[RMDB]
RNA sequence: GGGAACGACUCGAGUAGAGUCGAAAACUAACUGUGCCCUAUCUUGCUGGCAAGUUAAAGAUGUAGGUUUCAAUUCUUUUUUUAAAAGGCUCUGGAAGGUAGGAUCUAGGUCCAAUUAUCAAUAAUGCGAACUUCAAAUGUUCGCAUUUGAAGUUCGAAAAGAAACAACAACAACAAC
Reactivity to DMS in 0.01 (KOAc 150mM, MgCl2 10mM, bicine 150mM(pH8.5), 24C), signal-to-noise 3, nucleotides 027 to 126: c080u010a070a080c090u000g020u000g020c130c000c030u010a050u000c060u000u000g010c030u000g020g020c050a070a040g010u010u000a030a060a080g000a030u000g000u000a060g020g010u010u010u010c150a090a150u010u000c000u010u000u010u000u000u030u030a040a040a070a170g010g010c040u000c100u000g010g020a040a030g010g010u010a020g010g000a050u000c050u000a060g000g000u000c060c040a050a110u000u000a080u000c080a100a090u000a050a060u000g010
Reactivity to 2A3 in 0.01 (KOAc 150mM, MgCl2 10mM, bicine 150mM(pH8.5), 24C), signal-to-noise 2, nucleotides 027 to 126: c040u000a030a010c020u070g050u110g170c000c010c000u000a060u060c030u010u110g080c020u050g020g030c010a050a050g040u060u040a060a080a040g050a010u060g080u190a020g140g080u020u240u250c070a090a110u090u090c020u010u070u020u020u010u030u080a060a080a000a000g010g010c000u050c120u080g000g060a020a000g040g010u020a000g000g010a030u030c010u060a040g030g010u000c000c000a060a070u150u040a100u280c060a050a100u090a130a080u160g110
Chemical mapping of a 177-nucleotide RNA with DMS and 2A3.
High 2A3 reactivity points to a flexible backbone, as in loops and unpaired stretches.
The data come from the RNA Mapping Database (RMDB), library OK2TRN.
The reactions ran in a buffer of 150 mM KOAc, 10 mM MgCl2 and 150 mM bicine (pH 8.5), at 24 C.